Source information: Structure probing data (DMS and 2A3) for a 207-nucleotide construct. For 2A3, 1,355 sequencing reads were counted.
RNA sequence: GGGAACGACUCGAGUAGAGUCGAAAAAAUACUUUCAAAACUUAUAGUUGCAAACGACGACAACUACGCUUUAGCGGCUUAAUUCCCGCUUUCGCUUACCUAGAUUUGUCUGUGGGUUUACCGUAAGCGACAUUAACACAGAAUCGCUGGUUAACGCCCCUGUUAAUACGUUCGCGUAUUAACAGGGAAAAGAAACAACAACAACAAC
Reactivity to DMS in 0.01 (KOAc 150mM, MgCl2 10mM, bicine 150mM(pH8.5), 24C), signal-to-noise 1, nucleotides 027 to 156: a090a020u010a020c050u010u010u000c090a070a060a120a120c070u010u010a090u010a030g030u000u000g020c020a070a060a130c050g020a130c040g040a160c020a060a050c050u010a030c040g020c150u000u010u020a040g020c040g020g000c070u000u000a070a180u000u000c040c010c010g040c090u000u010u000c040g020c020u000u000a000c020c010u000a040g010a050u000u010u000g000u000c040u000g000u000g010g010g000u000u000u000a010c090c010g000u000a010a020g010c010g010a080c090a090u010u010a110a060c020a050c020a090g000a110a090u000c090g000c000u020g010g010u000u000a080a140c030g010c060
Reactivity to 2A3 in 0.01 (KOAc 150mM, MgCl2 10mM, bicine 150mM(pH8.5), 24C), signal-to-noise 3, nucleotides 027 to 156: a000a000u140a040c050u110u090u070c050a100a080a160a100c060u130u130a090u050a210g000u000u020g030c070a090a090a080c110g090a000c010g010a010c030a020a030c020u110a080c060g020c040u070u100u090a050g000c000g030g020c020u160u240a080a030u170u080c000c000c010g070c000u010u040u030c030g000c030u060u080a040c000c020u090a100g010a190u020u040u120g070u030c040u040g030u010g020g010g030u020u020u040a050c050c010g040u050a060a000g010c000g030a000c000a040u160u130a080a020c050a000c000a030g070a080a060u050c060g040c060u030g010g050u060u040a050a010c030g090c010